Conditions: 150 mM KOAc, 10 mM MgCl2 and 150 mM bicine (pH 8.5), 24 C. Chemical mapping of a 177-nucleotide RNA with DMS and 2A3.
[RMDB]
RNA sequence: GGGAACGACUCGAGUAGAGUCGAAAAUUCAGGGAGACGCUUUAACACACCGCCCACCUGGCGCGCGGCGCGGGGCGAUCCCGCCAGUUUCGCCACAUCACCGUAAGUGGUGACAUAGCCUUCGGGACGCUUAAUUACUGUUCGCAGUAAUUAAGCGAAAAGAAACAACAACAACAAC
Reactivity to DMS in 0.01 (KOAc 150mM, MgCl2 10mM, bicine 150mM(pH8.5), 24C), signal-to-noise 5, nucleotides 027 to 126: u020u010c090a120g010g010g020a070g000a090c050g000c050u010u000u010a090a100c110a080c070a070c050c030g020c040c000c050a120c100c070u010g000g010c040g020c300g020c030g000g000c130g010c040g020g000g020g020c160g000a160u010c010c000c020g020c050c060a140g010u000u000u010c030g000c020c030a090c120a120u010c020a070c040c030g010u010a090a160g010u020g020g000u000g000a020c150a080u000a100g000c030c030u000u000c060g010g000g010a220
Reactivity to 2A3 in 0.01 (KOAc 150mM, MgCl2 10mM, bicine 150mM(pH8.5), 24C), signal-to-noise 3, nucleotides 027 to 126: u060u020c020a040g010g020g000a050g020a030c030g040c050u150u080u150a150a010c060a010c010a020c060c020g030c010c010c000a030c010c070u050g060g000c010g000c000g000c010g060g010c040g000c030g040g020g010g010c050g010a070u190c000c000c000g000c000c000a000g000u010u050u080c020g000c000c000a020c000a030u080c020a020c030c020g050u060a160a020g070u070g170g020u020g000a010c010a040u130a020g050c000c000u070u070c050g050g020g000a040

Source: RMDB library OK2TST, as collected in RNAgym.